Chemical mapping of a 177-nucleotide RNA with DMS and 2A3. For 2A3, 2,704 sequencing reads were counted. Conditions: 150 mM KOAc, 10 mM MgCl2 and 150 mM bicine (pH 8.5), 24 C. The DMS profile rests on 1,571 reads. It was measured as part of the RMDB library OK1LIB.
RNA sequence: GGGAACGACUCGAGUAGAGUCGAAAACAUUCUUAGGAACUAGUACUGUUACAACAUUUGGAGAAUCUGCUUCUGGUAUUGCAGCAGGUGCAAGAACAGGACUUGCUUCAAUAGUAACAGCAGCAUUACGAUGAUACUGGUUCGCCAGUAUCAUCGUAAAAGAAACAACAACAACAAC
Reactivity to DMS in 0.01 (KOAc 150mM, MgCl2 10mM, bicine 150mM(pH8.5), 24C), signal-to-noise 1, nucleotides 027 to 126: c300a160u040u000c080u000u000a110g070g010a080a110c250u010a140g000u000a080c020u000g040u000u000a020c000a050a160c230a170u010u000u020g000g010a040g000a030a100u000c100u000g000c050u000u000c000u010g010g000u010a050u000u010g000c000a060g010c300a000g000g000u000g000c000a050a020g020a010a100c010a000g050g040a010c020u000u000g000c070u000u000c000a000a020u000a110g000u010a050a000c050a000g000c090a000g000c040a190u000u000
Reactivity to 2A3 in 0.01 (KOAc 150mM, MgCl2 10mM, bicine 150mM(pH8.5), 24C), signal-to-noise 3, nucleotides 027 to 126: c030a160u100u040c030u070u150a120g030g100a090a040c020u030a050g040u140a030c000u000g010u010u010a010c020a210a000c040a270u030u040u060g010g000a030g000a050a180u060c020u040g010c150u030u000c000u010g040g020u160a040u030u020g010c010a090g030c070a180g230g090u050g010c000a020a030g000a020a020c000a010g020g000a000c010u000u030g000c000u030u000c000a020a020u040a030g030u010a030a010c020a010g020c000a010g000c020a070u030u030